An RNA of 177 nucleotides, treated with 2A3 and DMS and read out base by base. For DMS, 936 sequencing reads were counted.
RNA sequence: GGGAACGACUCGAGUAGAGUCGAAAAACAGACUUUCAAGAGAAAAAGUCGGUGAAGCGAUUGAACGUCUGAAAUUGAUUUUGAAUCACGGUAUUGAUGUUAUAACUCUUUGCGACAAUACAGUCUACUCACUUACCAGUUUCGACUGGUAAGUGAGAAAAGAAACAACAACAACAAC
Reactivity to 2A3 in 0.01 (KOAc 150mM, MgCl2 10mM, bicine 150mM(pH8.5), 24C), signal-to-noise 2, nucleotides 027 to 126: a010c010a030g030a010c000u010u050u000c050a110a000g080a010g090a130a140a020a000a000g040u070c020g030g030u050g060a040a010g080c030g010a070u030u020g020a020a010c010g000u000c060u060g000a070a070a100u100u090g050a040u040u050u060u280g090a060a070u020c010a040c070g080g060u080a030u030u120g010a030u070g020u200u080a080u070a170a040c010u010c000u110u090u080g020c010g070a030c060a020a010u070a170c060a010g040u000c000u060a050
Reactivity to DMS in 0.01 (KOAc 150mM, MgCl2 10mM, bicine 150mM(pH8.5), 24C), signal-to-noise 1, nucleotides 027 to 126: a150c030a040g020a050c020u000u000u000c030a070a110g000a210g030a040a080a060a130a230g000u020c000g020g000u000g020a110a160g030c030g000a120u000u000g000a010a000c040g000u010c020u000g020a060a040a020u000u000g000a030u000u000u020u020g000a070a020u020c030a040c110g000g020u000a060u010u000g000a040u010g000u000u000a040u000a150a070c070u000c060u000u000u000g030c080g020a040c030a020a090u000a040c070a060g020u000c030u000a240